[RMDB]
RNA sequence: GGGAACGACUCGAGUAGAGUCGAAAACAGAAGCAGAAGUUCACCUGCAUGGUGGGCGUCAACCCCAUAGUCAUCACCCAGCAGUCGGGCGAGACCAACGGCUGCAUCCACUGCUCCUGCGAAAGCCAAUCGGUGCUAAGUUCGCUUAGCACCGAUUAAAAGAAACAACAACAACAAC
Reactivity to 2A3 in 0.01 (KOAc 150mM, MgCl2 10mM, bicine 150mM(pH8.5), 24C), signal-to-noise 1, nucleotides 027 to 126: c030a010g080a080a030g060c030a000g020a160a020g090u070u010c010a020c040c040u150g050c040a040u120g000g000u000g040g000g010c030g020u040c010a050a120c000c010c000c040a030u130a040g070u030c000a050u020c020a100c040c010c000a010g020c000a000g060u020c020g000g050g000c030g060a040g040a040c010c010a050a040c010g040g020c000u020g000c010a030u030c010c010a080c050u020g010c010u060c030c020u020g050c040g090a080a020a050g120c040c000
Reactivity to DMS in 0.01 (KOAc 150mM, MgCl2 10mM, bicine 150mM(pH8.5), 24C), signal-to-noise 2, nucleotides 027 to 126: c080a090g000a050a080g000c070a020g010a120a060g040u010u000c020a030c010c010u000g010c140a130u000g010g020u010g000g000g020c030g030u000c100a060a170c080c010c040c020a080u010a060g010u000c020a050u000c010a080c020c030c010a170g010c060a050g000u000c040g000g000g000c020g010a060g030a130c080c070a060a090c120g000g000c010u010g000c050a090u010c050c100a110c020u000g000c020u000c000c000u000g000c040g020a050a070a060g000c030c060